Source: RMDB library M2PK50, as collected in RNAgym. Structure probing data (2A3 and DMS) for a 177-nucleotide construct. Reactivities are given for positions 27 through 126. DMS adducts were read by reverse transcription with MarathonRT. For DMS, 1,460 sequencing reads were counted.
[RMDB]
RNA sequence: GGGAACGACUCGAGUAGAGUCGAAAAGCGGUACACUUCGGUGUACCGCAAAUCCGGAAUAAACAUGGGCCCAUGAGCCGAAACGGAAGGGCGUCCGCCCAAAAACGACGCCGUUCGCGGCGUCGAAGUUAUCGGUGAAGUUCGCUUCACCGAUAACAAAAGAAACAACAACAACAAC
Reactivity to 2A3 in 0.01 (KOAc 150mM, MgCl2 10mM, bicine 150mM(pH8.5), 24C), signal-to-noise 2, nucleotides 027 to 126: g010c000g010g000u010a000c000a000c020u040u050c170g050g000u020g000u010a000c010c010g000c010a010a000a000u000c000c000g000g140a160a130u210a100a140a030c120a160u130g020g050g020c000c040c060a160u170g060a040g010c020c000g080a180a080a040c060g020g040a090a030g060g000g050c090g030u070c070c060g010c010c020c020a000a080a000a030a000c010g000a000c010g010c090c000g000u020u030c220g000c020g040g020c020g000u010c000g000a020a000
Reactivity to DMS in 0.01 (KOAc 150mM, MgCl2 10mM, bicine 150mM(pH8.5), 24C), signal-to-noise 2, nucleotides 027 to 126: g020c000g030g020u000a000c010a000c000u010u020c180g020g010u000g000u000a000c000c000g000c000a020a010a060u010c030c030g020g020a120a150u010a050a100a080c140a040u010g000g000g000c000c000c060a110u010g030a130g010c010c010g000a070a130a100c110g010g010a090a070g000g000g000c000g000u020c050c040g000c000c010c050a030a040a080a100a180c060g010a010c010g010c000c000g030u010u010c140g040c000g000g000c000g030u000c000g000a000a050